[RMDB]
RNA sequence: GGGAACGACUCGAGUAGAGUCGAAAACAGCUAUCAAGAACGUCGACAGCAACCACGACGUGGCCGCGUUUACGCAGGUCGAUCAACGCCAGCGCGAACUCGGUAUCCAGCAGCGUGGAAAACGCAACUGAUUACCAGGGUUCGCCCUGGUAAUCAGAAAAGAAACAACAACAACAAC
Reactivity to DMS in 0.01 (KOAc 150mM, MgCl2 10mM, bicine 150mM(pH8.5), 24C), signal-to-noise 2, nucleotides 027 to 126: c140a090g010c050u000a070u000c020a120a060g010a050a070c030g000u000c040g020a080c140a140g000c070a100a120c020c050a110c010g000a030c000g020u010g010g010c000c000g030c110g010u000u000u010a070c020g020c000a130g020g010u000c020g000a150u000c270a070a060c220g010c020c000a050g000c150g020c020g000a000a000c000u010c020g000g000u000a040u000c080c040a030g040c140a080g010c000g000u010g010g020a100a030a060a070c070g000c040a080a110
Reactivity to 2A3 in 0.01 (KOAc 150mM, MgCl2 10mM, bicine 150mM(pH8.5), 24C), signal-to-noise 2, nucleotides 027 to 126: c020a010g110c040u110a040u220c070a120a040g040a160a020c040g040u060c000g070a100c070a070g070c030a080a080c000c030a050c030g040a030c000g020u030g030g000c010c010g030c020g010u040u070u040a040c040g000c020a030g040g130u150c060g060a120u160c080a100a080c100g000c020c000a000g000c020g060c020g020a000a010c000u000c010g030g030u040a120u130c070c000a010g040c010a020g000c040g000u040g020g020a010a140a020a020c030g000c010a000a080

Source: RMDB library OK2TST, as collected in RNAgym. This 177-nucleotide RNA was probed chemically with DMS and 2A3. For DMS, 1,610 sequencing reads were counted.